This 177-nucleotide RNA was probed chemically with DMS. The RNA was probed in 150 mM KOAc, 10 mM MgCl2 and 150 mM bicine (pH 8.5) at 24 C. It was measured as part of the RMDB library TTRINS.

[RMDB]
RNA sequence: GGGAACGACUCGAGUAGAGUCGAAAAGAUAUGGAUUACUGGAGUACCUAUACAGCGUUGAAAAUGAUGAGCUUCGGAAACGAAGCUCAUCAUUGGAGCUGUGAUAGGGAAACAGUAAUCCUAAGUCCUUUUCUUUAGAGUUCGCUCUAAAGAAAAGAAAAGAAACAACAACAACAAC
Reactivity to DMS in 0.01 (KOAc 150mM, MgCl2 10mM, bicine 150mM(pH8.5), 24C), signal-to-noise 2, nucleotides 027 to 126: g000a110u000a300u020g010g010a020u000u000a000c000u000g000g020a110g010u000a200c000c000u010a010u010a010c010a010g010c000g020u010u000g000a170a150a010a000u000g000a040u000g020a010g020c000u000u000c010g000g000a100a100a200c010g010a040a000g000c000u000c010a000u000c010a000u010u010g000g000a080g030c000u000g000u000g010a020u000a010g000g000g010a170a090a100c000a000g000u000a000a000u000c000c000u000a010a080g000u010c020